[RMDB]
RNA sequence: GGGAACGACUCGAGUAGAGUCGAAAAUGGUUCUUAUUUAGCAUUUCCAUGAGGAGCUUGCCCUUCAGAUGGUGGUCAGCACCGGAAUGGUGAGAGAAACAGUCUUCAAGUAUGCCUGGUUCUUCUUUGAGCUUCUGGUGAGAUUCUUGCGCGUUUACAUUUACGUACCCUUCGGGGUACGUAAAUGAAAAGAAACAACAACAACAAC
Reactivity to 2A3 in 0.01 (KOAc 150mM, MgCl2 10mM, bicine 150mM(pH8.5), 24C), signal-to-noise 2, nucleotides 027 to 156: u070g030g000u040u030c030u090u160a210u210u110u180a050g010c020a030u080u050u000c020c030a050u090g050a020g020g030a030g000c010u030u040g040c030c010c000u030u070c040a090g020a250u100g040g080u010g030g070u210c110a030g090c010a060c010c010g030g060a060a040u100g070g010u060g060a050g000a010g020a020a070a000c010a010g040u050c030u110u050c080a200a110g080u110a120u070g020c020c000u010g000g040u030u000c020u090u040c020u070u080u110g030a020g020c020u000u020c020u080g060g050u040g010a110g000a030u070u000c030u090u040g020c100g000c020g060u090u030u000a020
Reactivity to DMS in 0.01 (KOAc 150mM, MgCl2 10mM, bicine 150mM(pH8.5), 24C), signal-to-noise 2, nucleotides 027 to 156: u000g010g040u000u020c030u010u000a130u000u010u000a110g010c050a060u000u000u010c000c030a120u000g020a150g020g020a070g000c010u010u000g010c030c000c040u000u000c030a120g020a060u010g010g050u010g030g000u000c150a160g040c010a020c010c000g000g020a060a050u030g030g040u000g000a240g000a060g000a050a030a040c060a040g010u000c050u010u000c060a120a200g020u000a080u000g030c070c020u000g030g020u000u000c010u000u010c080u000u000u020g040a070g020c090u000u000c020u000g000g040u000g000a110g010a090u010u000c040u000u010g010c020g000c080g000u010u000u010a190